[RMDB]
This 177-nucleotide RNA was probed chemically with DMS. The data come from the RNA Mapping Database (RMDB), library OK2TST. For DMS, 1,240 sequencing reads were counted.
RNA sequence: GGGAACGACUCGAGUAGAGUCGAAAAGUCGGAAGUCCCGCCAGCCCUCCUUGCUUGUCCAGGAAUGAGUGCCCAUUGUCAGGACCUUCUGCCCACUGCUGGCCUCACUUAGUCAUCUUGGGCUCCAUAGUGACACAAUCUUCGGAUUGUGUCACUAAAAAGAAACAACAACAACAAC
Reactivity to DMS in 0.01 (KOAc 150mM, MgCl2 10mM, bicine 150mM(pH8.5), 24C), signal-to-noise 1, nucleotides 027 to 126: g020u000c080g050g050a080a070g010u000c010c010c020g000c080c060a110g000c070c020c000u000c020c030u000u010g010c030u000u000g020u000c040c020a040g020g020a060a100u000g000a070g020u000g000c030c020c050a100u000u000g000u020c050a060g030g000a090c080c010u000u000c070u010g010c020c010c030a100c060u000g040c020u000g000g010c010c030u000c070a010c110u000u000a090g010u000c040a080u000c040u010u000g010g010g000c030u010c060c050a160